[RMDB]
The record gives the reactivity of an RNA of 170 nucleotides to 2A3 and DMS.
It was measured as part of the RMDB library 15KLIB.
2A3 is a SHAPE reagent: it acylates the 2'-hydroxyl of flexible nucleotides of all four kinds.
For 2A3 the reverse transcriptase was SuperScript II with manganese.
The reactions ran in a buffer of 150 mM KOAc, 10 mM MgCl2 and 150 mM bicine (pH 8.5), at 24 C.
The 2A3 profile rests on 22,143 reads.

RNA sequence: GGGAACGACUCGAGUAGAGUCGAAAAUGAUGGCGGUAGUUUGUAUGUUAACAAGCACGCUUUUCAUACACCAGCAUAUGAUGUGAGUGCAUUCCGUGAUCUGAAACCUUUACCAUUCUUUUAUUAUAAAGACUCAGGUUCGCCUGAGUCAAAAGAAACAACAACAACAAC
Reactivity to 2A3 in 0.01 (KOAc 150mM, MgCl2 10mM, bicine 150mM(pH8.5), 24C), signal-to-noise 9, nucleotides 027 to 129: u030g000a000u010g010g010c000g010g040u060a090g010u100u030u020g070u020a120u140g240u080u190a140a010c010a000a000g020c000a010c010g000c000u160u050u030u010c000a000u030a030c040a040c020c030a000g020c030a050u060a030u150g120a050u080g080u030g040a030g020u030g000c000a020u110u010c010c020g040u040g030a050u000c000u020g030a050a040a070c020c000u040u090u080a100c050c020a070u100u050c050u040u120u070u040a160u150u040a100u070a080a120a010
Reactivity to DMS in 0.01 (KOAc 150mM, MgCl2 10mM, bicine 150mM(pH8.5), 24C), signal-to-noise 5, nucleotides 027 to 129: u030g010a060u010g000g000c000g000g000u000a020g040u030u020u000g020u020a080u060g050u000u020a180a050c000a020a040g040c000a050c000g000c030u000u000u000u000c050a010u020a110c110a170c050c030a040g040c070a070u030a050u000g020a070u000g040u020g010a000g010u030g020c000a080u000u000c010c070g050u000g000a000u030c030u050g030a130a080a100c060c060u000u000u000a120c080c090a110u000u000c040u040u030u030u040a010u070u090a160u060a040a000a020